[RMDB]
RNA sequence: GGGAACGACUCGAGUAGAGUCGAAAAUUAUCGGCAUGCGGGGUUCCUAUGGCGGCGUGGUCAUGAUUGGCAUGCUGUCGUCGGUGGUCGGACUUGGGUUGUUCAACCCGCUAUCGGUGGGGGCCGGAUUACAAGCUCCUUUCGAGGAGCUUGUAAUAAAAGAAACAACAACAACAAC
Reactivity to 2A3 in 0.01 (KOAc 150mM, MgCl2 10mM, bicine 150mM(pH8.5), 24C), signal-to-noise 2, nucleotides 027 to 126: u250u130a090u080c020g020g000c080a040u080g130c020g060g000g040g050u030u070c010c020u000a030u080g000g000c000g060g000c020g040u070g040g080u180c070a070u080g260a220u210u170g060g000c020a020u060g000c010u000g010u050c010g000u000c020g000g040u070g030g010u060c090g040g000a050c020u040u030g080g000g000u080u040g100u130u070c000a030a110c020c030c000g010c070u110a080u110c100g010g050u050g050g000g000g020g010c010c040g000g000
Reactivity to DMS in 0.01 (KOAc 150mM, MgCl2 10mM, bicine 150mM(pH8.5), 24C), signal-to-noise 2, nucleotides 027 to 126: u020u040a100u030c020g000g030c040a060u020g000c090g000g000g010g000u010u010c000c040u010a040u050g000g000c020g010g000c040g050u020g000g000u020c050a060u020g010a180u040u000g000g030c030a040u010g020c010u010g010u000c010g000u020c070g010g010u020g010g000u010c070g000g010a130c100u000u010g030g000g010u000u000g010u020u020c060a040a100c040c010c000g020c170u000a050u020c090g010g010u000g010g000g000g000g010c050c070g000g020